[RMDB]
RNA sequence: GGGAACGACUCGAGUAGAGUCGAAAAAGGCAACCUACUUGUUAAUAAAACAAUGACAUGAGAGGUGUUUAACUGCUCCUAGAUCAAAUUAUGCUUCUGCUCUUCAGACUUGCUGAGAUUUUAUCGUAAACUAUUGCUAAUUCGUUAGCAAUAGUUUAAAAGAAACAACAACAACAAC
Reactivity to 2A3 in 0.01 (KOAc 150mM, MgCl2 10mM, bicine 150mM(pH8.5), 24C), signal-to-noise 9, nucleotides 027 to 126: a000g080g000c050a090a090c000c000u020a030c010u030u010g020u020u050a160a080u110a140a250a040a020c090a070a170u120g030a010c010a020u190g010a180g000a020g210g010u030g080u040u130u090a070a050c040u050g020c010u000c010c010u030a040g010a050u040c050a010a040a050u090u050a040u150g020c010u030u030c010u020g050c030u020c010u160u070c020a050g020a120c050u050u080g010c010u040g020a030g030a180u020u030u050u080a100u070c040g020u020
Reactivity to DMS in 0.01 (KOAc 150mM, MgCl2 10mM, bicine 150mM(pH8.5), 24C), signal-to-noise 9, nucleotides 027 to 126: a070g010g010c060a080a060c010c010u000a060c040u010u000g010u000u000a070a100u030a110a100a100a110c210a080a080u010g000a030c050a020u000g000a130g000a020g000g010u000g010u010u010u020a060a100c090u000g000c080u000c020c020u000a060g010a080u010c080a050a060a080u010u010a090u010g000c020u010u000c020u000g000c210u000c060u000u010c040a070g000a070c100u010u010g000c020u000g000a110g000a080u010u010u010u000a070u010c110g000u010